[RMDB]
RNA sequence: GGGAACGACUCGAGUAGAGUCGAAAAUUUAAGAGCGUAGAUGUCUCUGUCACGAUACGAGUAUGUGACUCUCGUGUACUACUGACGAAUGAGACAGAGACAUUUAUGCUCAGUGUCAGUCAAGGAAUCUCAAGUUAGACUUCGGUCUAACUUGAGAAAAAGAAACAACAACAACAAC
Reactivity to DMS in 0.01 (KOAc 150mM, MgCl2 10mM, bicine 150mM(pH8.5), 24C), signal-to-noise 2, nucleotides 027 to 126: u000u030u000a110a080g000a000g000c000g020u000a010g010a000u000g000u000c000u000c000u000g010u000c010a100c030g010a080u010a120c020g010a080g010u000a030u020g000u000g020a030c070u000c120u010c150g010u010g010u010a040c040u020a040c050u000g010a130c070g000a100a070u000g000a090g010a010c000a000g010a000g000a000c000a010u000u000u000a000u000g000c000u000c000a010g010u000g010u010c120a030g020u000c110a060a090g010g010a140a160
Reactivity to 2A3 in 0.01 (KOAc 150mM, MgCl2 10mM, bicine 150mM(pH8.5), 24C), signal-to-noise 2, nucleotides 027 to 126: u130u120u080a180a040g000a010g000c010g000u000a030g000a010u000g000u020c000u020c000u000g010u010c000a000c070g020a010u010a120c030g000a000g000u050a020u300g120u180g110a050c020u000c000u030c130g130u150g000u100a050c010u010a040c000u110g150a090c010g100a100a030u150g000a010g000a080c000a000g000a000g010a000c000a010u000u010u000a000u000g020c000u000c000a010g000u020g010u020c040a020g010u010c030a030a040g140g030a110a090